[RMDB]
RNA sequence: GGGAACGACUCGAGUAGAGUCGAAAAAAUUUAUCAGGCAAUUGGACUAUGAUGGAUGGCAACGAACAAGUUGAAUAUCCAUUAGCACCAGUUUUGGAUAAUGCAAAACCAACUUUUAGACAAAUUAGUACCAUGGGAUGUUCGCAUCCCAUGGUACAAAAGAAACAACAACAACAAC
Reactivity to 2A3 in 0.01 (KOAc 150mM, MgCl2 10mM, bicine 150mM(pH8.5), 24C), signal-to-noise 2, nucleotides 027 to 126: a000a000u190u000u000a090u090c100a110g130g050c090a000a000u030u020g000g020a070c000u110a140u090g060a000u000g000g000a000u000g090g000c000a010a010c000g130a100a130c200a150a050g000u020u010g010a040a000u060a000u000c000c000a000u000u010a000g000c000a020c000c000a060g000u000u000u090u120g110g030a000u000a000a050u160g060c100a050a110a000a210c020c010a020a110c100u250u160u030u180a070g010a070c060a030a100a240u250u150a140
The data come from the RNA Mapping Database (RMDB), library OK1LIB.
Structure probing data (2A3) for a 177-nucleotide construct.
The RNA was probed in 150 mM KOAc, 10 mM MgCl2 and 150 mM bicine (pH 8.5) at 24 C.